[RMDB]
RNA sequence: GGGAACGACUCGAGUAGAGUCGAAAAUGGUAGUCCGCCACUCUAAGGGGACGCCUUUAGAAGAAGAGGCUAGGUGGUAUUCCGGUGUGGGAUACUUGGUAAUAUGUAACACUAAUUGCAUAAGAUUAAAACUUUGCAUACUUCGGUAUGCAAAGAAGACCUAUUAGGAGUUCGCUCCUAAUAGGUCAAAAGAAACAACAACAACAAC
Reactivity to DMS in 0.01 (KOAc 150mM, MgCl2 10mM, bicine 150mM(pH8.5), 24C), signal-to-noise 2, nucleotides 027 to 156: u000g010g020u010a060g040u010c020c010g050c060c060a210c090u000c050u010a040a040g000g040g020g030a120c170g000c000c040u000u000u010a020g000a130a110g040a140a090g010a110g040g030c040u010a080g010g040u020g000g000u000a090u000u000c010c030g030g100u000g060u000g030g000g020a080u000a040c030u000u000g050g020u010a090a140u000a050u020g000u000a070a090c030a120c110u020a080a110u000u010g000c000a120u000a040a210g010a190u000u010a050a100a100a160c010u000u000u000g000c000a010u000a000c010u000u020c300g010g000u020a000u000g000c000a000a000a020g020a070a110
Reactivity to 2A3 in 0.01 (KOAc 150mM, MgCl2 10mM, bicine 150mM(pH8.5), 24C), signal-to-noise 4, nucleotides 027 to 156: u080g060g000u030a100g020u020c020c040g120c140c000a050c030u120c070u110a090a130g000g000g000g020a020c040g050c000c000u060u060u080a120g010a140a000g020a040a020g010a050g050g000c030u050a030g000g090u060g040g010u050a060u090u060c060c040g080g040u140g020u120g080g010g010a020u040a080c020u030u080g040g010u050a050a040u040a060u110g040u070a040a000c030a020c130u050a100a080u030u040g020c020a040u060a080a080g020a090u140u180a030a100a040a050c000u000u000u000g000c000a010u010a000c010u010u010c030g030g000u000a000u000g010c010a000a000a000g000a020a010
Source information:
Structure probing data (DMS and 2A3) for a 207-nucleotide construct. For DMS the reverse transcriptase was MarathonRT. The RNA was probed in 150 mM KOAc, 10 mM MgCl2 and 150 mM bicine (pH 8.5) at 24 C. The 2A3 profile rests on 3,181 reads. The data come from the RNA Mapping Database (RMDB), library M2RFPK.